An RNA of 177 nucleotides, treated with DMS and 2A3 and read out base by base. The 2A3 profile rests on 1,720 reads. Conditions: 150 mM KOAc, 10 mM MgCl2 and 150 mM bicine (pH 8.5), 24 C. For DMS the reverse transcriptase was MarathonRT. For 2A3 the reverse transcriptase was SuperScript II with manganese.
RNA sequence: GGGAACGACUCGAGUAGAGUCGAAAAUCGCCUCCUAAAAGGUAACGGAGGCGCGCGAAGGUCCGCUCGGGACGGUCGGCAACCGUCCUUUUGAGUGCAAGAGCGUAAGCGGGCUUGACUGCGAGGCCUGAGAUUCCUUGUUCGCAAGGAAUCUCAGAAAAGAAACAACAACAACAAC
Reactivity to DMS in 0.01 (KOAc 150mM, MgCl2 10mM, bicine 150mM(pH8.5), 24C), signal-to-noise 2, nucleotides 027 to 126: u030c040g010c000c020u000c000c000u020a120a140a140a160g020g000u000a120a110c300g020g000a030g000g030c000g070c040g010c000g000a110a020g030g000u020c020c000g000c010u030c150g000g000g030a000c010g000g010u010c070g000g000c300a200a170c010c000g000u000c000c010u000u010u060u030g000a080g040u000g000c100a180a080g010a230g010c050g010u010a030a050g040c000g000g010g000c020u010u000g010a070c100u020g020c020g000a170g010g000c060
Reactivity to 2A3 in 0.01 (KOAc 150mM, MgCl2 10mM, bicine 150mM(pH8.5), 24C), signal-to-noise 3, nucleotides 027 to 126: u060c030g000c040c000u050c020c000u180a180a160a050a030g270g030u100a110a060c070g000g000a000g030g000c000g010c000g010c010g010a040a000g040g020u020c010c000g020c010u070c010g020g000g000a000c010g000g030u110c130g120g020c070a010a040c010c000g000u000c000c000u000u040u040u110g040a020g030u140g010c010a220a000g020a060g180c010g070u080a060a000g000c010g000g000g000c000u030u050g070a100c040u060g000c030g000a020g050g050c000